An RNA of 177 nucleotides, treated with DMS and read out base by base.
[RMDB]
RNA sequence: GGGAACGACUCGAGUAGAGUCGAAAAUACAUGCAUGAGUAAGAGGAUUCUGCCCACCCUACUCCCAGCCCUCCCCGCCAUAAAGACAACUCUCAGAGCAGCUCUUGGAAGCUGGGCUGUGUGGUAGCGAAACUCACAUGUUCGCAUGUGAGUUUCGAAAAGAAACAACAACAACAAC
Reactivity to DMS in 0.01 (KOAc 150mM, MgCl2 10mM, bicine 150mM(pH8.5), 24C), signal-to-noise 1, nucleotides 027 to 126: u000a090c050a120u000g010c050a050u000g030a070g010u020a060a090g000a130g010g000a120u000u010c080u000g010c010c020c050a160c050c000c000u000a120c060u000c000c000c000a150g000c000c030c000u000c030c000c010c020g030c060c070a060u010a090a080a040g000a060c110a060a040c040u000c050u000c010a040g010a060g020c050a020g000c020u000c030u030u030g050g000a120a060g010c020u010g020g010g020c000u000g000u010g010u000g030g010u000a070g030